Source: RMDB library OK1LIB, as collected in RNAgym. Chemical mapping of a 177-nucleotide RNA with 2A3. The 2A3 profile rests on 525 reads.
[RMDB]
RNA sequence: GGGAACGACUCGAGUAGAGUCGAAAAACAACAGCACAUUCUCUUUCGUGUUCCCUGACGAACACAUUGACCUCGAGGGAAAGGGAAACAAGUAUCGACCACGAGAGGACGCACGUCUGAUGUACUCCGGUGCCCUACCUUUCGAGGUAGGGCACCGAAAAGAAACAACAACAACAAC
Reactivity to 2A3 in 0.01 (KOAc 150mM, MgCl2 10mM, bicine 150mM(pH8.5), 24C), signal-to-noise 1, nucleotides 027 to 126: a000c040a050a010c040a010g280c040a000c040a020u120u000c000u000c000u070u000u000c070g020u000g050u050u000c030c070c080u060g040a090c070g000a000a000c040a000c000a240u020u080g050a110c020c020u070c130g020a180g000g020g020a020a080a050g110g000g000a000a080a030c020a220a080g050u100a060u150c000g000a040c040c000a090c010g020a000g000a030g110g020a050c000g000c000a000c080g000u000c030u050g070a000u020g040u020a090c080u050c030